[RMDB]
RNA sequence: GGGAACGACUCGAGUAGAGUCGAAAAGAUAUGGAAUUGUGAUGAGCUAUGAAGUACAUCGGAAACGAUGUAUGGAGCUCUCACUGAUUCCUAAGUCAAAAGAGUGUCUGUGUUCGCACAGACACUCCUUAGUUUGAGGCUUCGGCCUCAAACUAAGAAAAGAAACAACAACAACAAC
Reactivity to 2A3 in 0.01 (KOAc 150mM, MgCl2 10mM, bicine 150mM(pH8.5), 24C), signal-to-noise 1, nucleotides 027 to 126: g000a010u010a010u030g010g000a000a030u020u030g020u010g080a300u160g000a010g020c020u070a300u300g000a000a000g030u000a000c000a010u000c010g010g000a020a000a010c000g000a010u000g000u000a020u000g010g000a000g010c000u000c000u000c000a020c020u020g000a000u000u070c010c010u000a000a020g030u020c020a020a020a150a170g010a010g010u020g000u030c010u020g050u020g090u110u150c300g080c140a010c020a000g000a010c000a000c000u020c000
Reactivity to DMS in 0.01 (KOAc 150mM, MgCl2 10mM, bicine 150mM(pH8.5), 24C), signal-to-noise 1, nucleotides 027 to 126: g020a010u000a020u020g000g000a000a020u000u000g030u000g000a030u050g020a020g020c020u000a300u020g000a160a230g000u010a000c000a000u000c000g000g020a000a010a020c010g010a010u010g000u000a010u000g010g020a020g020c000u000c000u000c010a000c000u000g010a010u010u000c000c000u000a010a090g010u000c010a140a100a100a100g020a000g040u000g010u000c020u010g050u000g000u000u000c300g010c010a000c000a000g000a000c000a020c000u000c000